[RMDB]
RNA sequence: GGGAACGACUCGAGUAGAGUCGAAAACAGCGUUCGCGCUGAUCGGAACCUUUGUGCAAGCGAGGCAGGGAGCGAGUGUGUUACCCAUUGGGUAACCCGCUCGCGAAGAACUGCUCCCCACCGCUUGCACUCUGGUGAUAAGUGAAUUCGUUCACAACAUACGUGAGGUAUUCGUACCUCACGUAUGAAAAGAAACAACAACAACAAC
Reactivity to 2A3 in 0.01 (KOAc 150mM, MgCl2 10mM, bicine 150mM(pH8.5), 24C), signal-to-noise 5, nucleotides 027 to 156: c000a010g020c010g070u110u150c210g030c000g040c120u020g060a170u200c080g110g070a050a030c000c000u030u000u010g000u000g000c000a000a000g000c010g010a030g010g000c010a010g000g020g010a020g000c000g000a000g000u020g000u000g000u010u000a000c000c010c110a300u210u300g010g000g000u000a000a000c000c020c010g010c000u010c010g000c000g000a000a000g000a010a020c010u000g000c000u090c020c000c000c000a050c010c000g000c000u000u000g000c010a000c000u000c000u000g000g000u060g070a080u080a300a090g020u000g040a020a050u140u110c180g080u090u040c060a020c010a160a000
Reactivity to DMS in 0.01 (KOAc 150mM, MgCl2 10mM, bicine 150mM(pH8.5), 24C), signal-to-noise 2, nucleotides 027 to 156: c010a030g030c010g040u000u010c220g010c080g050c000u000g010a120u000c030g020g020a230a020c000c010u010u010u000g020u000g000c000a040a050g000c040g000a300g010g040c040a110g030g020g020a280g000c000g000a030g040u000g020u000g000u000u000a020c000c000c000a270u010u000g040g030g000u000a010a010c000c010c020g010c030u010c000g000c020g000a070a100g000a110a140c050u010g010c010u010c150c070c040c030a300c130c010g040c000u000u000g000c000a000c000u000c010u000g030g000u000g000a110u010a100a090g000u000g020a010a060u010u010c140g000u000u000c010a020c020a010a300

An RNA of 207 nucleotides, treated with 2A3 and DMS and read out base by base. The reactions ran in a buffer of 150 mM KOAc, 10 mM MgCl2 and 150 mM bicine (pH 8.5), at 24 C. Reactivities are rounded to 0.1 and cut off at 0 and 3. DMS adducts were read by reverse transcription with MarathonRT.